RNA sequence: GGGAACGACUCGAGUAGAGUCGAAAAGGGACGCCUUUAGAAGAAGACGCUAGGUGGUAUUCCGGUGUGGGAUACUUGGUAAUAUGUAACGCUAAUUGCAUAAGAUUGUAGGACGGAAUUUACAGUCAAAACGGUCCUGCGUUCGCGCAGGACCGAAGUAUAGUUGUUCGUUCGCGAACAACUAUACAAAAGAAACAACAACAACAAC
Reactivity to DMS in 0.01 (KOAc 150mM, MgCl2 10mM, bicine 150mM(pH8.5), 24C), signal-to-noise 1, nucleotides 027 to 156: g010g010g050a020c030g000c010c050u000u000u030a100g040a170a240g010a070a030g010a010c020g040c050u000a060g020g030u000g000g000u010a060u000u000c070c000g040g010u000g050u000g040g020g010a050u000a010c030u000u000g000g010u010a070a150u010a080u000g000u000a050a100c080g030c130u000a100a080u000u010g000c000a090u010a090a090g000a070u010u010g030u000a030g030g000a130c070g010g000a150a240u000u000u010a030c030a030g050u010c020a080a030a080a230c040g010g030u010c000c020u000g060c010g040u000u010c260g020c050g020c010a000g020g010a000c010c000g000a010a060
Reactivity to 2A3 in 0.01 (KOAc 150mM, MgCl2 10mM, bicine 150mM(pH8.5), 24C), signal-to-noise 3, nucleotides 027 to 156: g030g000g010a030c030g050c030c040u100u140u140a080g020a130a000g010a030a010g040a030c030g010c060u050a020g020g060u030g030g050u070a080u080u030c030c020g040g070u120g030u080g040g020g010a020u040a060c010u010u080g030g020u070a070a040u030a070u130g080u080a050a000c030g000c100u060a090a070u090u070g010c030a030u030a100a080g010a040u070u080g030u030a020g010g030a010c040g030g030a020a010u140u040u070a080c040a010g020u050c020a030a060a070a000c020g000g000u000c000c000u000g000c000g020u020u080c190g010c010g000c060a000g000g000a000c000c000g000a000a000

Source: RMDB library M2RFPK, as collected in RNAgym. An RNA of 207 nucleotides, treated with DMS and 2A3 and read out base by base. The DMS profile rests on 2,024 reads. Reactivities are rounded to 0.1 and cut off at 0 and 3. For 2A3 the reverse transcriptase was SuperScript II with manganese.